[RMDB]
Source: RMDB library RFM100, as collected in RNAgym. This 177-nucleotide RNA was probed chemically with 2A3 and DMS. The reactions ran in a buffer of 150 mM KOAc, 10 mM MgCl2 and 150 mM bicine (pH 8.5), at 24 C. 2A3 adducts were read by reverse transcription with SuperScript II with manganese.
RNA sequence: GGGAACGACUCGAGUAGAGUCGAAAAAAUCCCUGAGUGAAGAUUGCAGUCGUAAAGUAAAAGGACGGUCCAGGCACUUGCGCUUUUUUGCCUGCAAAGAAUUCCGGUUUGCCGGUUUUCCCGGCGUAGUACCCGGUAUGUUCGCAUACCGGGUACUAAAAGAAACAACAACAACAAC
Reactivity to 2A3 in 0.01 (KOAc 150mM, MgCl2 10mM, bicine 150mM(pH8.5), 24C), signal-to-noise 2, nucleotides 027 to 126: a000a000u060c060c000c020u010g150a150g010u190g000a000a060g000a090u050u060g000c000a000g010u040c040g000u010a000a050a050g130u060a000a000a020a150g080g050a030c070g000g030u060c030c030a090g010g050c110a010c030u000u130g020c020g020c060u000u030u010u000u110u020g050c020c000u010g040c000a000a020a000g080a050a150u140u000c010c030g070g060u060u020u130g030c070c000g000g080u000u000u090u040c060c000c000g000g020c020g020u040
Reactivity to DMS in 0.01 (KOAc 150mM, MgCl2 10mM, bicine 150mM(pH8.5), 24C), signal-to-noise 1, nucleotides 027 to 126: a040a080u000c000c020c000u020g010a090g020u020g020a000a050g030a040u000u000g020c000a030g040u000c020g000u030a040a030a150g020u040a140a170a000a070g000g010a090c080g000g000u010c080c070a100g000g030c100a120c000u030u000g010c260g040c040u030u000u000u000u010u010g010c000c020u000g010c080a010a050a040g000a090a120u040u000c030c060g000g000u000u000u060g020c010c010g000g010u000u000u090u140c220c000c000g000g010c010g000u000